About this RNA
The data come from the RNA Mapping Database (RMDB), library M2RFPK. Chemical mapping of a 207-nucleotide RNA with 2A3.
[RMDB]
RNA sequence: GGGAACGACUCGAGUAGAGUCGAAAAAGCGUAGCGGUACGCCGCUACGCAAGGCGCAUUUGAGCUGUAUUGUACGCCUUGCAUAAAGCAAAAGUACUAAAAAAACGUGCCGUUACGACGGCACGAAAAAACAUCCAUUGGUUCGCCAAUGGAUGAACCUUACACUCAGCUUCGGCUGAGUGUAAGGAAAAGAAACAACAACAACAAC
Reactivity to 2A3 in 0.01 (KOAc 150mM, MgCl2 10mM, bicine 150mM(pH8.5), 24C), signal-to-noise 2, nucleotides 027 to 156: a000g020c000g000u010a000g000c000g010g030u040a010c180g030c040c000g000c000u000a000c010g000c000a000a000g000g000c000g000c030a070u150u110u250g090a130g000c010u060g090u200a140u110u140g000u010a040c010g000c000c000u000u000g000c050a070u160a260a110a040g000c000a000a060a000a000g020u030a030c060u140a000a050a070a080a020a000a000c000g000u000g010c000c000g000u000u060a110c270g010a000c000g080g000c000a000c000g000a030a010a000a000a000a000c000a000u010c010c000a000u000u000g040g000u050u040c180g000c110c010a000a000u000g000g000a000u000g000a000a020
2A3 is a SHAPE reagent: it acylates the 2'-hydroxyl of flexible nucleotides of all four kinds. The reactions ran in a buffer of 150 mM KOAc, 10 mM MgCl2 and 150 mM bicine (pH 8.5), at 24 C. Values are in units of 0.01, from 0 to 300, in steps of 10. 2A3 adducts were read by reverse transcription with SuperScript II with manganese.